Chemical mapping of a 177-nucleotide RNA with DMS and 2A3. The data come from the RNA Mapping Database (RMDB), library OK1LIB. Conditions: 150 mM KOAc, 10 mM MgCl2 and 150 mM bicine (pH 8.5), 24 C.

[RMDB]
RNA sequence: GGGAACGACUCGAGUAGAGUCGAAAAGGGCUGAGCACUUUUGAUGCUUCGGCGCAGUUUAUACGAACCGGUAAGUAUAUACUGCUUGGAUACGAACCGGUAAGUAUCCAUCUUGUGCUCUGCCCAAGGGAACGGGAACCUUCGGGUUCUUGUUCCCAAAAGAAACAACAACAACAAC
Reactivity to DMS in 0.01 (KOAc 150mM, MgCl2 10mM, bicine 150mM(pH8.5), 24C), signal-to-noise 6, nucleotides 027 to 126: g000g000g020c000u000g000a020g000c010a000c010u010u010u020u040g010a050u020g030c040u010u030c160g000g010c020g020c050a050g000u010u030u020a010u000a010c010g020a250a100c010c010g010g000u000a070a300g010u000a000u000a040u020a110c040u010g010c070u030u030g000g000a010u000a010c010g000a260a130c020c010g000g010u000a030a190g010u000a000u000c100c050a040u010c050u000u010g000u000g000c000u010c000u000g000c010c000c000a020a050
Reactivity to 2A3 in 0.01 (KOAc 150mM, MgCl2 10mM, bicine 150mM(pH8.5), 24C), signal-to-noise 9, nucleotides 027 to 126: g000g000g000c020u030g000a000g010c010a010c010u050u080u130u210g040a040u050g010c020u060u060c160g070g000c020g000c010a000g000u030u060u030a030u010a010c020g030a110a070c020c010g030g020u070a070a020g010u000a020u000a010u010a050c010u020g060c030u070u130g050g010a020u020a040c020g020a100a080c030c010g020g000u010a030a010g000u000a000u000c020c010a020u020c020u040u060g000u000g000c000u000c020u040g000c000c000c000a000a010

The DMS profile rests on 23,329 reads. Reactivities are given for positions 27 through 126. 2A3 adducts were read by reverse transcription with SuperScript II with manganese. For 2A3, 94,318 sequencing reads were counted.